[RMDB]
RNA sequence: GGGAACGACUCGAGUAGAGUCGAAAAGAUAUGGAGGGUAUGGGACAUGCUCUGGGAUCGGAAACGAUCCCUGAGCAACAGCCCAGACCCUCCUAAGUCAAAGGCCACACAGUUCGCUGUGUGGCCAGUUCAGAAAUAUCUUCGGAUAUUUCUGAACAAAAGAAACAACAACAACAAC
Reactivity to DMS in 0.01 (KOAc 150mM, MgCl2 10mM, bicine 150mM(pH8.5), 24C), signal-to-noise 2, nucleotides 027 to 126: g010a010u000a050u020g000g000a020g030g010g020u000a040u010g000g010g000a020c090a150u030g010c000u000c000u000g020g000g010a020u000c010g000g010a010a010a040c000g010a020u000c000c010c010u000g020a000g010c010a070a050c280a180g020c000c000c000a010g000a010c000c000c000u010c000c000u000a000a080g000u000c010a090a150a160g020g000c010c000a000c000a000c010a010g010u010u010c260g030c000u010g010u000g030u000g000g000c000c000a000
Reactivity to 2A3 in 0.01 (KOAc 150mM, MgCl2 10mM, bicine 150mM(pH8.5), 24C), signal-to-noise 2, nucleotides 027 to 126: g010a000u000a010u040g000g010a000g000g000g020u020a010u020g020g000g010a060c180a260u300g010c010u000c020u000g020g010g010a000u000c000g000g000a030a000a010c000g020a000u000c010c000c000u000g000a000g040c000a000a010c060a000g030c000c000c010a000g000a000c000c010c010u000c000c000u010a000a000g010u000c010a000a060a110g010g010c000c010a000c000a010c000a000g080u190u230c300g080c190u000g000u000g000u000g000g010c000c000a000